[RMDB]
RNA sequence: GGGAACGACUCGAGUAGAGUCGAAAACACCAGGUUAACGACCUCGGGUAUGGUAACAACGCUUGAGAUUGGACAAUCCGCAGCCAAGCUCCCUCAUGGGAAGAAGGUUCAGAGACUAGAUGGUUGUGGGUUGAACACACGUUUAAUUGAAACAGUUGUCACGCAAUAGGUUCGCCUAUUGCGUGACAAAAGAAACAACAACAACAAC
Reactivity to 2A3 in 0.01 (KOAc 150mM, MgCl2 10mM, bicine 150mM(pH8.5), 24C), signal-to-noise 2, nucleotides 027 to 156: c060a060c010c000a010g020g010u020u040a050a020c050g120a020c100c010u050c080g020g060g020u120a140u180g070g130u240a120a070c100a020a020c040g030c070u040u150g040a010g000a160u100u090g020g020a000c000a020a000u010c000c000g050c040a000g020c000c000a020a020g030c000u010c010c000c000u110c090a060u280g120g060g040a000a070g010a000a010g030g050u100u160c120a070g000a010g000a090c010u020a020g030a270u020g010g000u000u000g000u000g000g030g000u000u000g020a030a000c050a000c010a000c060g030u020u040u080a010a100u130u100g080a140a030a000c000a070g010u050u050
Annotation
Source: RMDB library ARCHII, as collected in RNAgym. This 207-nucleotide RNA was probed chemically with 2A3. Values are in units of 0.01, from 0 to 300, in steps of 10. 2A3 adducts were read by reverse transcription with SuperScript II with manganese. Conditions: 150 mM KOAc, 10 mM MgCl2 and 150 mM bicine (pH 8.5), 24 C.